[RMDB]
RNA sequence: GGGAACGACUCGAGUAGAGUCGAAAAGCCAUUGACCCACGAGCACUGCUGAAAGGCGCCAGAUGUCGAGUGACCAACAACAAUGUCAAAGUUUUCGGUGUGCAUCUUGGCCAUCGGCACGUCGCCCACGUGCAUCUUGACGUACUCCUCCAGGCUCGAAGUGCAAAGACUUCGGUCUUUGCACUUCAAAAGAAACAACAACAACAAC
Reactivity to 2A3 in 0.01 (KOAc 150mM, MgCl2 10mM, bicine 150mM(pH8.5), 24C), signal-to-noise 3, nucleotides 027 to 156: g060c000c020a030u040u140g080a090c000c010c010a000c050g010a010g000c060a020c110u040g040c030u020g050a090a060a010g020g020c030g020c010c000a000g020a070u030g030u080c040g060a040g040u100g100a040c060c010a010a080c000a040a030c010a040a150u220g040u210c060a110a160a100g010u000u020u050u200c030g080g020u090g030u120g000c000a040u030c060u070u200g050g010c010c010a070u030c000g030g000c030a010c040g050u040c080g010c010c010c000a040c010g020u020g000c010a040u010c030u050u070g010a010c020g040u080a140c020u030c050c010u010c000c040a020g030g040c020u040c060
The record gives the reactivity of an RNA of 207 nucleotides to 2A3. Reactivities are given for positions 27 through 156.